[RMDB]
RNA sequence: GGGAACGACUCGAGUAGAGUCGAAAAGGCAGGACUUACCAAGUCUGGGGGCCGAUGAGGGUUGGCUCAAAGUAGGGUUUUGACUUGACAACUCAAGCUGUGACCCCAAAACGAUGGAGGUAAAUGAAAAAUCCAUCUGCCUUCGGGCAGAUGGAAAGAAGAUAUACGACUUCGGUCGUAUAUCUUCAAAAGAAACAACAACAACAAC
Reactivity to 2A3 in 0.01 (KOAc 150mM, MgCl2 10mM, bicine 150mM(pH8.5), 24C), signal-to-noise 3, nucleotides 027 to 156: g050g010c060a020g000g030a030c020u040u060a070c060c040a090a010g030u000c040u090g000g020g010g040g000c030c060g010a020u060g030a080g000g010g030u030u060g010g010c010u030c080a100a070a010g070u120a050g010g090g000u050u070u110u110g060a070c000u020u040g020a010c020a110a050c080u010c060a020a030g000c030u050g000u100g080a070c000c000c000c010a040a140a010a010c040g060a040u080g040g050a030g030g050u050a080a100a080u220g070a080a100a030a010a010u000c010c000a000u000c000u000g000c000c000u020u050c110g000g000g000c000a010g000a010u000g000g000a010a000a000
Reactivity to DMS in 0.01 (KOAc 150mM, MgCl2 10mM, bicine 150mM(pH8.5), 24C), signal-to-noise 2, nucleotides 027 to 156: g020g030c060a080g000g000a100c040u000u000a150c090c080a040a260g000u020c030u000g010g020g010g080g020c110c040g000a110u000g000a110g000g000g030u000u020g030g040c030u000c080a060a050a070g010u000a030g000g010g020u000u010u000u010g020a040c030u030u020g010a090c040a080a110c190u000c010a050a120g030c020u000g000u000g010a060c010c000c000c050a030a030a060a090c060g000a180u010g020g010a110g000g010u000a050a100a230u000g000a040a090a100a110a240u010c010c000a010u000c000u010g000c000c000u000u000c300g000g000g050c000a010g000a010u000g010g000a000a030a060
Source: RMDB library M2RFPK, as collected in RNAgym. Structure probing data (2A3 and DMS) for a 207-nucleotide construct. The reactions ran in a buffer of 150 mM KOAc, 10 mM MgCl2 and 150 mM bicine (pH 8.5), at 24 C.